[RMDB]
RNA sequence: GGGAACGACUCGAGUAGAGUCGAAAAGAUAUGGAUACCUUAUCUAUUCAUGCCAAGUCCAACAGCGCACGGAUCGGAAACGAUCCAUGCGACAUGGAUGGCAUGAAUAGAUAAGGUAUCCUAAGUCCAUUAAUCCCUCCUUCGGGAGGGAUUAAUGAAAAGAAACAACAACAACAAC
Reactivity to DMS in 0.01 (KOAc 150mM, MgCl2 10mM, bicine 150mM(pH8.5), 24C), signal-to-noise 2, nucleotides 027 to 126: g000a120u010a300u010g000g000a010u000a000c000c010u000u050a000u000c000u000a030u000u000c000a010u000g020c000c020a090a190g030u000c000c030a040a160c270a300g000c030g000c000a020c010g000g000a020u000c000g000g000a150a090a170c010g000a000u000c010c010a020u000g000c000g000a030c100a190u010g000g020a050u000g000g000c000a010u000g010a000a010u000a000g000a010u000a000a000g000g010u000a000u000c000c000u000a010a070g000u000c030
The record gives the reactivity of an RNA of 177 nucleotides to DMS. Source: RMDB library TTRINS, as collected in RNAgym. Conditions: 150 mM KOAc, 10 mM MgCl2 and 150 mM bicine (pH 8.5), 24 C. DMS adducts were read by reverse transcription with MarathonRT.